Chemical mapping of a 207-nucleotide RNA with DMS and 2A3. Values are in units of 0.01, from 0 to 300, in steps of 10. The reactions ran in a buffer of 150 mM KOAc, 10 mM MgCl2 and 150 mM bicine (pH 8.5), at 24 C. It was measured as part of the RMDB library OK3TST. For DMS the reverse transcriptase was MarathonRT.

RNA sequence: GGGAACGACUCGAGUAGAGUCGAAAACAGAUAGUGAGUUUUAUUGCCAAAAACCUUGUAGUUUAGGAGGGUAGACACAGCGUACUGUCCAGUGGCUACGGCCAGCGCAAUCCUCUUUCCGCUCUUGCUGAUCUCUGGCAGAAACGGACCCGCGGCCCACUUACCAGUUGUUCGCAACUGGUAAGUGAAAAGAAACAACAACAACAAC
Reactivity to DMS in 0.01 (KOAc 150mM, MgCl2 10mM, bicine 150mM(pH8.5), 24C), signal-to-noise 1, nucleotides 027 to 156: c060a090g010a140u000a000g000u010g000a090g020u010u000u010u000a060u030u010g000c010c070a050a090a090a110a040c050c020u000u030g020u000a090g000u000u000u010a090g020g000a120g030g060g020u010a110g000a080c040a070c050a090g000c020g030u000a130c030u000g030u010c030c020a120g000u010g040g010c000u000a070c070g030g010c000c020a050g010c030g000c090a060a050u000c030c040u010c030u000u000u000c040c010g000c020u000c020u000u000g020c060u020g000a100u000c120u010c000u000g060g020c040a090g010a020a040a100c040g000g000a090c040c010c030g030c050g010g020c060c060
Reactivity to 2A3 in 0.01 (KOAc 150mM, MgCl2 10mM, bicine 150mM(pH8.5), 24C), signal-to-noise 3, nucleotides 027 to 156: c020a020g090a080u270a040g080u070g070a040g030u000u000u010u160a120u120u120g020c030c030a090a050a030a050a060c060c030u110u160g020u200a110g030u050u110u120a040g010g020a040g030g020g010u100a050g030a070c050a010c010a130g030c000g070u080a070c020u030g060u090c020c000a020g010u040g060g010c030u070a080c090g020g000c020c010a020g000c000g000c030a040a080u060c010c020u000c000u060u070u020c040c040g000c010u010c000u000u120g010c040u050g090a140u070c060u020c040u100g010g000c000a020g040a040a080a000c030g000g050a020c000c010c010g060c040g010g040c000c000